[RMDB]
RNA sequence: GGGAACGACUCGAGUAGAGUCGAAAAGCGUCGGGGCUGACGUUGACCGGCACGGUAUCGCCGUCGUGCACCUGGCCGGCCAACAGCAUCUUGGCCAGCUGGUCACCGAUGGCCUGCUGCACCAGCCUCACAAUACGGAUUUCGAUCCGUAUUGUGAAAAAGAAACAACAACAACAAC
Reactivity to DMS in 0.01 (KOAc 150mM, MgCl2 10mM, bicine 150mM(pH8.5), 24C), signal-to-noise 5, nucleotides 027 to 126: g000c050g000u010c060g000g010g010g010c010u010g000a090c060g000u000u000g010a140c040c010g000g000c030a130c050g000g010u000a050u050c220g020c010c020g020u020c150g000u000g040c100a050c030c000u040g000g020c000c020g010g000c000c000a000a020c120a130g010c120a060u020c110u010u000g000g010c280c010a040g010c040u000g000g000u020c030a090c080c120g000a070u000g010g000c000c030u020g000c020u000g000c070a120c070c030a050g010c020c030
Reactivity to 2A3 in 0.01 (KOAc 150mM, MgCl2 10mM, bicine 150mM(pH8.5), 24C), signal-to-noise 9, nucleotides 027 to 126: g040c030g020u020c020g020g010g020g000c020u020g020a030c040g020u020u040g040a050c010c010g020g030c050a040c090g010g030u130a110u270c070g000c020c010g130u120c050g020u100g000c060a020c000c020u060g050g000c000c000g000g000c000c000a030a020c040a030g080c020a090u060c060u050u060g020g000c000c010a010g010c020u040g020g000u030c020a040c070c150g040a060u070g010g000c000c020u030g020c020u020g000c010a050c030c010a030g020c010c000
An RNA of 177 nucleotides, treated with DMS and 2A3 and read out base by base. High DMS reactivity at an A or C suggests that its Watson-Crick edge is free. DMS adducts were read by reverse transcription with MarathonRT. The reactions ran in a buffer of 150 mM KOAc, 10 mM MgCl2 and 150 mM bicine (pH 8.5), at 24 C.